[RMDB]
Structure probing data (2A3) for a 207-nucleotide construct. Conditions: 150 mM KOAc, 10 mM MgCl2 and 150 mM bicine (pH 8.5), 24 C. It was measured as part of the RMDB library OK3TST.

RNA sequence: GGGAACGACUCGAGUAGAGUCGAAAAGAUGGGCCUUCUGGAAAUGUACCUGGCCACCCAGGAGGUCCUGAGGAAGAGAUAGACGGCCAGGGUCCGAUCAUACGAUAUAAACCUGCUCAACGUAUGAUCGGUUAUGACAAUUAAGAAGAGCAGGUUAAAUUAGUCCCUGGUUCGCCAGGGACUAAUUAAAAGAAACAACAACAACAAC
Reactivity to 2A3 in 0.01 (KOAc 150mM, MgCl2 10mM, bicine 150mM(pH8.5), 24C), signal-to-noise 1, nucleotides 027 to 156: g040a060u190g000g000g000c010c000u000u000c000u010g010g060a030a070a190u190g060u050a120c000c000u000g000g000c010c000a000c010c010c010a010g000g000a020g000g000u000c040c010u010g000a040g070g100a040a060g010a010g060a050u090a200g070a020c210g010g000c000c040a000g000g000g000u010c020c000g000a000u010c000a000u000a000c000g020a000u000a000u050a210a110a010c000c000u000g030c000u000c000a040a080c000g000u010a000u000g000a030u000c000g000g010u000u040a000u000g000a010c000a000a170u150u170a030a100g010a060a000g010a070g000c000a040g000g000u000u010a000